Structure probing data (2A3 and DMS) for a 177-nucleotide construct.
For 2A3, 1,659 sequencing reads were counted.
Values cover nucleotides 27 to 126.
The reactions ran in a buffer of 150 mM KOAc, 10 mM MgCl2 and 150 mM bicine (pH 8.5), at 24 C.
RNA sequence: GGGAACGACUCGAGUAGAGUCGAAAACGAGCAGUUGCUGGUGUCGUAUCUGCGGCCGAGCAAGAUCGACGCGGCCAAGCACGCUUGGGCGAUUCUCGCGCUGCUGGUCAAGCGCCUGCGCCACGCGGGCGUGCGCCUAAUUCGUUAGGCGCACGCCAAAAGAAACAACAACAACAAC
Reactivity to 2A3 in 0.01 (KOAc 150mM, MgCl2 10mM, bicine 150mM(pH8.5), 24C), signal-to-noise 2, nucleotides 027 to 126: c030g020a000g000c030a030g000u300u280g060c030u050g110g000u120g010u090c020g030u150a060u140c030u040g010c020g090g130c160c030g060a080g050c080a220a100g000a100u060c010g010a010c020g000c070g030g000c000c000a030a000g020c030a040c010g030c030u030u030g010g040g010c040g080a020u140u050c050u020c030g000c010g010c030u020g000c000u020g000g040u040c050a100a040g000c040g040c020c030u050g010c010g030c020c050a140c060g090c060g020
Reactivity to DMS in 0.01 (KOAc 150mM, MgCl2 10mM, bicine 150mM(pH8.5), 24C), signal-to-noise 2, nucleotides 027 to 126: c050g020a070g010c010a050g000u000u000g060c030u020g000g010u000g000u000c020g020u000a040u000c020u000g000c080g010g000c160c090g000a050g020c140a090a080g010a040u010c010g000a060c000g000c010g000g010c030c030a060a070g000c010a070c230g010c010u020u000g000g010g020c050g010a110u010u010c030u000c280g000c070g000c040u010g000c010u000g010g020u000c050a120a150g010c030g000c060c000u010g010c000g000c060c080a110c070g010c060g010